This 177-nucleotide RNA was probed chemically with 2A3. Source: RMDB library OK1LIB, as collected in RNAgym. For 2A3, 493 sequencing reads were counted. The reactions ran in a buffer of 150 mM KOAc, 10 mM MgCl2 and 150 mM bicine (pH 8.5), at 24 C. Values cover nucleotides 27 to 126.

[RMDB]
RNA sequence: GGGAACGACUCGAGUAGAGUCGAAAAGAUCUUAAAGGUAAAACAGUCCUAGUACGUGCUGAUUUUAACGUACCUUUAAAAGACGGUGAAAUUACUAAUGACAACCGUAUCGUUCAAGCUUUACCUAGCCGAAUUACCAGUUCGCUGGUAAUUCGGCAAAAGAAACAACAACAACAAC
Reactivity to 2A3 in 0.01 (KOAc 150mM, MgCl2 10mM, bicine 150mM(pH8.5), 24C), signal-to-noise 2, nucleotides 027 to 126: g000a160u190c050u070u080a040a000a080g020g020u060a010a010a010a010c000a080g100u100c050c010u020a060g210u160a040c170g000u040g200c010u020g090a300u180u060u120u250a000a000c080g060u000a000c000c030u010u280u180a090a150a000a000g250a000c010g000g050u030g140a000a000a070u300u280a050c140u140a130a200u140g000a090c120a100a000c040c040g020u020a010u040c030g040u120u120c070a170a020g000c000u000u000u000a010c000c000u000a010